[RMDB]
RNA sequence: GGGAACGACUCGAGUAGAGUCGAAAAUGUCUGAACCGAUAAUAGCUCCUCAACUCCCAGCAUUGCCACACAAGACAUGGGCUAGUUAUGCUUCCGACACAUCAUCUAUGAAGAACCGUGAAAUUGAGAAGGUUAAACGAUUCGUCGUUUAACCUUCAAAAGAAACAACAACAACAAC
Reactivity to 2A3 in 0.01 (KOAc 150mM, MgCl2 10mM, bicine 150mM(pH8.5), 24C), signal-to-noise 6, nucleotides 027 to 126: u120g050u010c040u030g040a070a070c030c020g010a020u050a140a060u060a110g020c020u040c020c000u030c040a060a050c020u020c010c020c010a030g000c010a070u030u150g020c020c000a050c010a010c030a050a050g050a050c040a090u100g020g000g040c030u030a040g060u120u040a070u120g030c040u050u020c020c030g050a020c010a010c000a080u090c000a010u010c070u090a130u120g040a090a040g020a050a030c010c040g030u060g120a130a110a070u090u080g020a080
Reactivity to DMS in 0.01 (KOAc 150mM, MgCl2 10mM, bicine 150mM(pH8.5), 24C), signal-to-noise 4, nucleotides 027 to 126: u020g020u010c030u000g010a120a110c070c020g010a090u020a050a070u020a080g020c020u010c020c010u000c070a110a080c090u000c010c010c000a080g020c100a070u030u010g000c010c010a050c070a070c110a130a060g020a070c060a040u010g000g010g010c030u000a030g010u010u020a050u010g010c070u000u000c020c040g010a070c050a060c080a050u010c050a030u000c050u000a070u020g020a040a130g000a040a090c040c040g010u010g010a030a050a120u020u010g000a300